Chemical mapping of a 177-nucleotide RNA with 2A3 and DMS. It was measured as part of the RMDB library RFM100. The 2A3 profile rests on 1,885 reads. For DMS the reverse transcriptase was MarathonRT. The RNA was probed in 150 mM KOAc, 10 mM MgCl2 and 150 mM bicine (pH 8.5) at 24 C. The DMS profile rests on 2,817 reads.

[RMDB]
RNA sequence: GGGAACGACUCGAGUAGAGUCGAAAACAUGAGCCAUGCCAACCCCAUCAAACCGAACCGGAUCCAGCAGAUCCUGCGCCGUUACUUCAAGCGGAUCCUGCCCAGGCCGCUGACCCUGAUCGAGGAUUGCCUUACUAGUGUUCGCACUAGUAAGGCAAAAAGAAACAACAACAACAAC
Reactivity to 2A3 in 0.01 (KOAc 150mM, MgCl2 10mM, bicine 150mM(pH8.5), 24C), signal-to-noise 2, nucleotides 027 to 126: c040a030u100g030a000g020c000c010a020u020g000c000c000a050a020c060c000c010c010a010u050c040a030a080a030c010c020g030a030a020c000c000g000g020a020u030c000c020a010g060c020a010g030a070u020c000c020u060g010c000g010c010c010g060u090u040a060c030u060u120c040a090a000g010c000g000g060a120u070c000c010u030g040c020c010c000a010g030g000c000c010g000c010u040g020a030c000c000c010u010g010a050u070c020g000a030g070g070a060u020
Reactivity to DMS in 0.01 (KOAc 150mM, MgCl2 10mM, bicine 150mM(pH8.5), 24C), signal-to-noise 2, nucleotides 027 to 126: c080a100u020g020a090g000c020c020a090u000g030c000c040a050a110c040c010c010c010a090u020c070a030a050a090c120c070g000a090a050c110c030g000g020a070u030c060c080a090g000c080a040g010a080u000c060c030u000g000c060g040c050c020g000u010u000a070c080u030u020c120a010a050g010c010g020g040a050u000c010c030u000g020c020c000c030a140g010g010c010c010g000c000u040g000a060c010c010c030u010g010a060u020c050g000a000g000g000a110u000